The record gives the reactivity of an RNA of 177 nucleotides to 2A3 and DMS. Reactivities are given for positions 27 through 126. For DMS the reverse transcriptase was MarathonRT. The DMS profile rests on 808 reads. For 2A3 the reverse transcriptase was SuperScript II with manganese. The reactions ran in a buffer of 150 mM KOAc, 10 mM MgCl2 and 150 mM bicine (pH 8.5), at 24 C. Source: RMDB library OK2TRN, as collected in RNAgym. Reactivities are rounded to 0.1 and cut off at 0 and 3.
RNA sequence: GGGAACGACUCGAGUAGAGUCGAAAAGACCGCGCGCCAAUACCAUUUGGUCAUUGCCUAAUCGCAGCGUAUUUUGACUAAGAUGACAAUGGGUUAUGGCAAUCGCCAGCGCAUCGGCAGCAUCCGCCGGAACAUGCCCAUUCGUGGGCAUGUUCCGAAAAGAAACAACAACAACAAC
Reactivity to 2A3 in 0.01 (KOAc 150mM, MgCl2 10mM, bicine 150mM(pH8.5), 24C), signal-to-noise 1, nucleotides 027 to 126: g060a040c030c030g000c000g000c010g010c010c060a000a090u170a170c010c000a130u020u000u290g000g000u000c040a000u000u000g040c010c000u040a080a050u030c100g000c300a010g000c020g020u050a080u050u090u050u060g120a150c100u230a070a070g030a060u060g190a040c000a010a020u030g090g000g050u030u040a190u300g000g050c030a000a020u020c010g020c000c050a000g000c010g040c000a120u180c070g000g000c000a010g010c000a000u020c010c090g060c030
Reactivity to DMS in 0.01 (KOAc 150mM, MgCl2 10mM, bicine 150mM(pH8.5), 24C), signal-to-noise 1, nucleotides 027 to 126: g000a190c000c050g020c130g000c080g010c020c030a080a080u010a100c120c130a110u000u010u010g000g010u000c260a020u000u000g000c010c000u010a040a000u020c060g000c040a010g010c300g000u020a060u000u010u010u020g020a230c260u000a060a110g010a020u000g010a010c030a050a300u000g000g000g000u010u000a000u010g020g010c030a060a020u000c250g010c000c000a070g020c090g000c030a060u000c070g020g040c070a100g030c070a100u010c050c000g030c130